[RMDB]
RNA sequence: GGGAACGACUCGAGUAGAGUCGAAAAUAAACAAAACAAAUUUAAACGAGUACGGUGCAGCAGAGAGGCUCGGCAGUUGCACCUUGAAGCGAGCCUUAAAGCACCAGAAGAAAAUUCUGGUGCAAAACGUCAUCGUGCACUUCGGUGCAUGAUGACGAAAAGAAACAACAACAACAAC
Reactivity to DMS in 0.01 (KOAc 150mM, MgCl2 10mM, bicine 150mM(pH8.5), 24C), signal-to-noise 2, nucleotides 027 to 126: u030a110a070a130c190a020a030a030a060c070a090a070a160u020u110u080a100a110a100c200g000a170g000u020a080c010g000g000u000g000c010a100g000c000a070g040a110g000a050g000g000c000u010c000g000g000c030a070g020u000u000g000c000a110c000c000u000u000g020a080a090g020c010g000a060g000c040c000u000u040a030a060a140g000c000a000c000c000a010g000a000a010g000a060a040a140a190u000u000c010u010g030g000u000g000c000a000a070a120a090
Reactivity to 2A3 in 0.01 (KOAc 150mM, MgCl2 10mM, bicine 150mM(pH8.5), 24C), signal-to-noise 3, nucleotides 027 to 126: u110a000a090a010c060a030a070a040a010c120a080a110a100u180u250u260a290a200a000c110g030a040g100u120a000c010g040g000u010g000c010a000g000c010a030g030a000g010a040g150g000c000u000c000g090g000c010a010g030u020u050g000c000a000c000c040u020u040g030a010a000g090c010g000a000g000c000c000u040u090a100a130a000g040c000a000c000c000a010g000a000a000g000a030a200a020a000u040u000c020u040g000g000u030g000c000a000a000a000a000
Conditions: 150 mM KOAc, 10 mM MgCl2 and 150 mM bicine (pH 8.5), 24 C.
An RNA of 177 nucleotides, treated with DMS and 2A3 and read out base by base.
The data come from the RNA Mapping Database (RMDB), library OK1LIB.
The DMS profile rests on 2,240 reads.